[RMDB]
RNA sequence: GGGAACGACUCGAGUAGAGUCGAAAAGAUAUGGAGCGGCAUGCAUUUCAACAGCUAUCGUCGGAAACGACGAUAGACAUGAAAUGUGUUCGCUCCUAAGUCAAAAUCCUGUACUUCGGUACAGGAACUUGUAGUUUUACUUCGGUAAAACUACAAGAAAAGAAACAACAACAACAAC
Reactivity to 2A3 in 0.01 (KOAc 150mM, MgCl2 10mM, bicine 150mM(pH8.5), 24C), signal-to-noise 3, nucleotides 027 to 126: g020a000u050a050u210g000g010a000g000c010g040g000c180a040u120g020c000a020u060u040u000c120a220a180c070a130g030c010u000a000u010c000g000u010c020g020g040a060a100a060c010g020a000c000g010a000u000a000g010a000c010a040u090g000a000a000a010u010g020u010g000u030u040c000g000c000u000c000c010u000a020a000g020u000c020a000a020a010a300u040c000c000u000g010u000a000c000u060u130c300g180g000u000a000c010a010g000g000a000a030
Reactivity to DMS in 0.01 (KOAc 150mM, MgCl2 10mM, bicine 150mM(pH8.5), 24C), signal-to-noise 4, nucleotides 027 to 126: g010a040u010a300u010g010g010a010g030c000g020g020c220a040u010g000c000a010u000u000u000c010a040a120c290a220g000c020u000a000u000c000g010u000c000g000g000a080a110a250c010g010a010c000g010a010u000a000g030a010c070a200u000g010a010a010a020u000g010u010g010u020u010c000g020c010u000c010c000u010a020a080g020u000c040a080a120a100a190u000c000c000u000g000u000a010c000u000u010c220g040g000u000a000c000a000g000g000a010a020
This 177-nucleotide RNA was probed chemically with 2A3 and DMS.
The RNA was probed in 150 mM KOAc, 10 mM MgCl2 and 150 mM bicine (pH 8.5) at 24 C.
As a SHAPE reagent, 2A3 marks flexible, mostly unpaired nucleotides at the ribose 2'-OH.
DMS adducts were read by reverse transcription with MarathonRT.
Values cover nucleotides 27 to 126.
2A3 adducts were read by reverse transcription with SuperScript II with manganese.
The data come from the RNA Mapping Database (RMDB), library TTRDES.